[RMDB]
RNA sequence: GGGAACGACUCGAGUAGAGUCGAAAAAUAGUACAGCACCUUGAAAACAAAUCAUCUGCUAGUUCAGUAUUUUCUACUUACAAUCACUCCCUCCCAGGGCAUGUAAUUAAUUUACUGAGCUUACAAAGUUUCUGCGUUCAUUCGUGAACGCAGAAACAAAAGAAACAACAACAACAAC
Reactivity to 2A3 in 0.01 (KOAc 150mM, MgCl2 10mM, bicine 150mM(pH8.5), 24C), signal-to-noise 1, nucleotides 027 to 126: a050u160a020g140u120a000c020a000g050c020a140c000c000u000u040g100a160a170a000a000c060a010a050a150u020c000a020u020c020u060g060c100u180a000g020u000u050c000a000g000u000a010u010u020u020u010c080u020a060c010u000u000a000c020a000a150u140c010a020c080u060c010c010c010u010c020c050c030a020g000g020g080c050a030u130g000u000a000a060u060u060a000a020u010u000u000a000c000u010g020a000g000c000u020u020a060c000a000a040a030
The record gives the reactivity of an RNA of 177 nucleotides to 2A3.
Values cover nucleotides 27 to 126.
2A3 adducts were read by reverse transcription with SuperScript II with manganese.
Conditions: 150 mM KOAc, 10 mM MgCl2 and 150 mM bicine (pH 8.5), 24 C.
The data come from the RNA Mapping Database (RMDB), library RFM100.